[RMDB]
RNA sequence: GGGAACGACUCGAGUAGAGUCGAAAAGCGUACUACGACCGAAGAACUGAAAGCUAGUCCCGCCCGUUAUCCCAAAUAGGAUAACGUAACAAGGACUUGGACCUUUCAGGGAGGUCGUAUCGCAAAAUCCACAUGGAGCUUCGGCUCCAUGUGGAAAGUGAAUUGCGAAGUUCGCUUCGCAAUUCACAAAAGAAACAACAACAACAAC
Reactivity to 2A3 in 0.01 (KOAc 150mM, MgCl2 10mM, bicine 150mM(pH8.5), 24C), signal-to-noise 2, nucleotides 027 to 156: g000c000g050u140a090c030u020a000c030g000a000c000c000g190a240a000g010a070a000c000u000g000a010a000a000g010c010u010a000g020u000c020c010c010g010c020c030c000g020u000u000a000u010c010c030c060a300a300a280u300a150g000g010a000u000a000a000c000g010u080a000a100c110a110a030g000g010a010c000u060u110g070g030a040c040c000u030u000u000c000a000g000g000g000a020g030g000u000c000g010u000a000u000c000g000c000a000a000a070a100u020c000c000a000c000a000u000g000g000a000g050c080u150u140c300g130g000c010u100c000c000a000u000g010u000g000g000a000a000a000